Structure probing data (2A3 and DMS) for a 177-nucleotide construct. The data come from the RNA Mapping Database (RMDB), library OK1LIB. The RNA was probed in 150 mM KOAc, 10 mM MgCl2 and 150 mM bicine (pH 8.5) at 24 C. For 2A3, 1,763 sequencing reads were counted.
RNA sequence: GGGAACGACUCGAGUAGAGUCGAAAAGAAGACGUGACGAAAAGUCACGUCAAUAGAGAGACUACGCAACUCUUAAAAACACAACAAAAGUGUAAAAGCGUAGCAGGAUCGAGAGAUCCUGAAAAGAGCAUUAUCCUGCUUUCGAGCAGGAUAAUGCAAAAGAAACAACAACAACAAC
Reactivity to 2A3 in 0.01 (KOAc 150mM, MgCl2 10mM, bicine 150mM(pH8.5), 24C), signal-to-noise 2, nucleotides 027 to 126: g250a080a040g030a000c020g000u000g000a000c000g200a170a200a000a060g000u030c000a000c000g010u000c020a000a000u010a000g020a000g000a000g010a010c000u000a000c000g000c060a060a030c000u040c000u000u020a000a000a020a050a000c070a020c020a300a000c010a090a130a100a130g050u070g050u090a110a100a000a010g020c000g000u000a000g000c000a000g020g000a000u030c050g010a040g070a000g000a120u000c000c020u000g000a000a000a000a050g040a000
Reactivity to DMS in 0.01 (KOAc 150mM, MgCl2 10mM, bicine 150mM(pH8.5), 24C), signal-to-noise 1, nucleotides 027 to 126: g060a130a110g000a030c000g070u000g040a000c000g000a080a030a120a130g010u000c000a000c000g000u000c000a030a000u080a010g000a000g000a110g010a150c000u000a000c000g000c000a180a200c010u000c000u000u030a030a040a000a060a000c000a000c010a070a100c300a130a110a100a060g060u000g030u000a050a100a030a140g000c000g030u000a000g000c060a000g030g000a000u000c000g010a130g030a200g000a000u000c000c000u000g000a000a080a040a010g040a130